The record gives the reactivity of an RNA of 207 nucleotides to 2A3. The reactions ran in a buffer of 150 mM KOAc, 10 mM MgCl2 and 150 mM bicine (pH 8.5), at 24 C. Source: RMDB library OK3TST, as collected in RNAgym.
[RMDB]
RNA sequence: GGGAACGACUCGAGUAGAGUCGAAAACGUUAAAGCAAGAGUUCUAACUGCAUCUCGGGCAGGAAGAGAGAAACCGAGCUUUGUAUAAUACAUCACUCCCCUGGCGCUAUUGCCUACAUACCUAGACCUAUAACAAUUUAUCCCAAAUGAGGACAUCCAAGGCAGGGAAGUUCGCUUCCCUGCCUUGAAAAGAAACAACAACAACAAC
Reactivity to 2A3 in 0.01 (KOAc 150mM, MgCl2 10mM, bicine 150mM(pH8.5), 24C), signal-to-noise 1, nucleotides 027 to 156: c000g060u060u050a040a060a020g030c040a160a110g010a060g090u190u030c000u050a050a050c000u010g000c000a070u060c110u030c050g040g040g000c030a030g020g020a140a000g000a000g040a000g070a170a000a020c040c000g010a000g040c000u000u100u130g080u050a040u150a300a180u170a110c080a060u180c190a030c270u050c000c000c000c020u010g010g000c020g000c000u010a070u090u300g000c000c020u080a040c030a050u150a000c000c000u010a000g070a140c010c000u080a120u190a180a000c000a030a080u140u190u020a110u110c000c040c100a100a080a030u250g000a060g030g000a000c000a000u040c010